Chemical mapping of a 207-nucleotide RNA with 2A3.

[RMDB]
RNA sequence: GGGAACGACUCGAGUAGAGUCGAAAACUCUAGCCGCUUAAGGCUGGGCCACUGCACUAAUUUGUCUUUGGGUUAGGUAGGGCAACCUACAGCAGUGUUAUUUACAAAGAAUCGAAUCGGUCUGCGCCACGAAGUCCGGUUCUAAAACUUAGUGGAUUGGUUAGCAUAUCUUCGGAUAUGCUAACCAAAAAGAAACAACAACAACAAC
Reactivity to 2A3 in 0.01 (KOAc 150mM, MgCl2 10mM, bicine 150mM(pH8.5), 24C), signal-to-noise 2, nucleotides 027 to 156: c070u070c000u030a010g000c000c020g080c220u210u250a190a050g000g000c030u020g000g020g000c020c000a020c000u000g000c000a010c080u000a010a000u010u000u010g020u000c000u010u000u010g000g010g000u000u000a010g010g000u000a010g000g020g000c050a100a110c000c000u000a000c000a020g000c000a000g000u030g100u280u140a170u120u160u030a040c010a000a000a000g000a000a000u010c010g000a000a000u020c000g010g000u000c000u000g010c030g010c030c000a000c000g020a020a000g000u000c000c000g000g000u000u000c000u000a010a010a060a100c070u080u110a000g000u000g000g000a020u010
Conditions: 150 mM KOAc, 10 mM MgCl2 and 150 mM bicine (pH 8.5), 24 C.
The 2A3 profile rests on 1,738 reads.
Source: RMDB library RSTRND, as collected in RNAgym.